RNA sequence: GGGAACGACUCGAGUAGAGUCGAAAAAGAAGUGCGAACGAGCCAUCGCGCGGUCGACAGAACCUUGAUUCAUUACAAGCGCAUCCUCAAUAUUGAAUCCUUCAUAUGACAUGACCGCAACCACGAAGUUCUGUGCUGCUGGUCGUUCGUCAAAGCCGAUAUCAAGGCAGUUCGCUGCCUUGAUAUCAAAAGAAACAACAACAACAAC
Reactivity to DMS in 0.01 (KOAc 150mM, MgCl2 10mM, bicine 150mM(pH8.5), 24C), signal-to-noise 1, nucleotides 027 to 156: a090g020a080a140g020u000g040c020g040a050a040c010g000a090g060c020c010a120u000c160g000c110g010c000g000g000u000c020g010a210c030a090g010a080a010c040c010u020u020g020a120u000u000c030a030u000u010a060c050a050a140g030c090g060c050a030u010c010c010u000c050a090a150u010a080u000u000g010a050a020u010c050c030u000u000c030a150u000a120u010g010a120c060a090u000g010a060c010c000g000c020a110a190c080c030a170c040g020a120a090g020u000u000c000u020g020u000g000c000u000g010c040u000g030g040u000c040g020u000u000c020g020u000c070a040a060a230g000c060c120
Reactivity to 2A3 in 0.01 (KOAc 150mM, MgCl2 10mM, bicine 150mM(pH8.5), 24C), signal-to-noise 4, nucleotides 027 to 156: a000g170a120a000g050u110g030c000g000a000a000c010g010a050g150c010c030a110u160c130g000c010g000c010g150g030u060c070g090a010c020a030g020a030a060c020c060u070u110g080a090u130u070c050a020u060u130a060c080a180a020g000c040g030c110a080u120c020c040u090c090a080a080u100a090u120u130g020a040a020u070c030c050u110u130c050a080u070a060u160g030a060c020a080u140g030a040c060c000g000c020a030a040c060c040a080c070g030a100a020g070u100u050c050u090g020u030g020c000u050g000c010u040g020g010u000c000g000u000u000c010g020u020c000a020a040a020g090c050c030
Conditions: 150 mM KOAc, 10 mM MgCl2 and 150 mM bicine (pH 8.5), 24 C. Chemical mapping of a 207-nucleotide RNA with DMS and 2A3. For 2A3 the reverse transcriptase was SuperScript II with manganese. DMS adducts were read by reverse transcription with MarathonRT. The data come from the RNA Mapping Database (RMDB), library OK3TST.